Structure probing data (DMS and 2A3) for a 177-nucleotide construct. For DMS, 904 sequencing reads were counted. The reactions ran in a buffer of 150 mM KOAc, 10 mM MgCl2 and 150 mM bicine (pH 8.5), at 24 C. For 2A3, 1,104 sequencing reads were counted.

RNA sequence: GGGAACGACUCGAGUAGAGUCGAAAAAUGGCCGUGCUGCGAUCUCGCGUACAUGCGCAUGAGUACGUACCGUGAUCGUACCAGGCGCUCGUCUGAUGAUCAGAUCUAGGCCGGUACGAUCGAUCGAGUCUACGCAUCGCUUCGGCGAUGCGUAGACAAAAGAAACAACAACAACAAC
Reactivity to DMS in 0.01 (KOAc 150mM, MgCl2 10mM, bicine 150mM(pH8.5), 24C), signal-to-noise 1, nucleotides 027 to 126: a050u000g010g000c070c040g020u000g000c070u000g000c070g000a050u000c030u000c050g060c080g040u000a050c120a050u000g010c030g000c170a190u010g000a060g020u000a040c030g020u000a080c070c050g010u000g000a030u000c000g000u000a020c020c000a150g000g000c010g030c020u000c300g000u010c000u030g000a220u020g000a140u000c010a000g000a020u000c080u000a080g000g000c010c010g000g000u000a000c010g000a030u010c000g000a040u000c100g000a100
Reactivity to 2A3 in 0.01 (KOAc 150mM, MgCl2 10mM, bicine 150mM(pH8.5), 24C), signal-to-noise 1, nucleotides 027 to 126: a020u190g070g000c020c000g010u080g040c090u050g000c010g110a090u030c040u030c070g020c020g000u090a090c050a110u150g020c040g000c040a120u110g040a020g040u030a070c040g050u070a080c000c050g000u050g000a000u000c000g010u000a000c010c020a220g010g010c100g140c060u010c000g030u000c040u120g070a220u130g080a160u300c020a000g000a020u030c050u080a000g000g040c020c000g030g040u000a000c000g000a000u020c000g020a040u050c100g020a050